[RMDB]
The record gives the reactivity of an RNA of 207 nucleotides to 2A3 and DMS.

RNA sequence: GGGAACGACUCGAGUAGAGUCGAAAAUCCGUGUUUCGACACGGAAGUACAUCCUAAGUCGAUGGGAGACGUAACUAACGCUAUAAUCUCGGAAACGAGGUAGCGUUAGCCCGUCAUCGAUCAUCGAUAUGGAAUCGUGUGUCCGUUCGCGGACAAACUUAACAAACCAGUUCGCUGGUUUGUUAAGAAAAGAAACAACAACAACAAC
Reactivity to 2A3 in 0.01 (KOAc 150mM, MgCl2 10mM, bicine 150mM(pH8.5), 24C), signal-to-noise 9, nucleotides 027 to 156: u010c000c000g000u010g010u000u130u040c160g030a020c000a000c010g010g030a020a010g010u040a050c060a140u030c000c010u070a170a040g010u000c000g010a000u000g010g020g010a040g000a010c000g020u020a050a040c000u000a000a000c000g030c010u010a030u060a280a300u240c010u000c000g040g020a110a070a070c010g000a000g010g000u000a000g000c000g000u000u000a000g000c010c000c000g030u010c010a300u180c020g090a090u070c000a000u010c000g000a010u010a020u080g010g040a020a090u150c110g050u120g020u010g000u100c010c010g000u030u070c280g010c020g070g000a000c010a010a010a010
Reactivity to DMS in 0.01 (KOAc 150mM, MgCl2 10mM, bicine 150mM(pH8.5), 24C), signal-to-noise 5, nucleotides 027 to 156: u000c000c000g010u000g010u000u000u000c200g020a130c010a020c000g010g010a010a060g020u000a100c090a110u020c010c010u000a090a300g040u000c010g030a030u000g000g030g010a300g000a030c010g020u000a080a040c010u000a000a020c000g010c000u000a030u000a090a110u010c010u000c000g010g010a170a130a300c000g000a030g060g020u000a020g020c000g010u000u000a000g010c000c020c000g020u000c010a090u010c060g020a300u010c000a010u010c010g010a020u000a300u000g000g010a030a100u000c080g000u010g010u000g000u000c000c020g020u000u000c200g020c020g010g000a020c020a020a030a110
The RNA was probed in 150 mM KOAc, 10 mM MgCl2 and 150 mM bicine (pH 8.5) at 24 C. 2A3 adducts were read by reverse transcription with SuperScript II with manganese.